[RMDB]
RNA sequence: GGGAACGACUCGAGUAGAGUCGAAAACCGCCGGUCGCCACGUUGAUCGGUUUCGUCUGGCUGGGCGAGAUACCGACGGCGCUCGGCGCAGUCGGCGGCGUCAUGGCGAUCCUCGGUGUGCUCGUCGUCAAUGUGAUGCGCAAGCGAUAGAGGCAAACAUAAUUGACCAAUUCGUUGGUCAAUUAUGAAAAGAAACAACAACAACAAC
Reactivity to 2A3 in 0.01 (KOAc 150mM, MgCl2 10mM, bicine 150mM(pH8.5), 24C), signal-to-noise 5, nucleotides 027 to 156: c010c000g010c000c000g010g010u060c010g010c010c000a030c010g000u010u030g110a300u020c000g000g000u010u030u010c010g000u000c020u070g190g210c110u190g080g030g000c020g020a030g020a090u200a040c000c000g010a010c010g010g000c010g020c130u150c170g000g000c000g010c010a030g130u070c010g000g000c000g000g000c010g040u070c070a120u190g090g000c040g040a040u060c000c020u020c070g080g020u060g020u030g070c010u020c030g020u000c010g070u060c040a060a090u140g030u070g090a230u230g080c080g000c040a060a080g040c000g030a020u050a120g030a030g010g040c040a060a030a000
Reactivity to DMS in 0.01 (KOAc 150mM, MgCl2 10mM, bicine 150mM(pH8.5), 24C), signal-to-noise 2, nucleotides 027 to 156: c010c020g020c000c010g010g000u000c030g000c030c010a070c040g000u000u000g000a120u010c020g000g010u010u000u000c010g020u000c000u000g030g020c150u000g020g040g010c030g040a020g010a110u000a050c010c010g000a060c000g030g020c020g030c000u010c100g080g050c010g010c040a040g010u000c010g000g020c040g020g020c020g000u000c060a090u000g020g010c040g020a080u010c030c020u030c020g000g040u000g010u000g010c040u000c040g010u010c020g010u020c020a200a160u000g020u010g010a110u000g000c010g020c000a080a190g000c030g000a100u000a070g020a080g030g000c080a080a120a210
An RNA of 207 nucleotides, treated with 2A3 and DMS and read out base by base. For DMS, 4,792 sequencing reads were counted. Reactivities are rounded to 0.1 and cut off at 0 and 3. It was measured as part of the RMDB library OK3TST. The RNA was probed in 150 mM KOAc, 10 mM MgCl2 and 150 mM bicine (pH 8.5) at 24 C.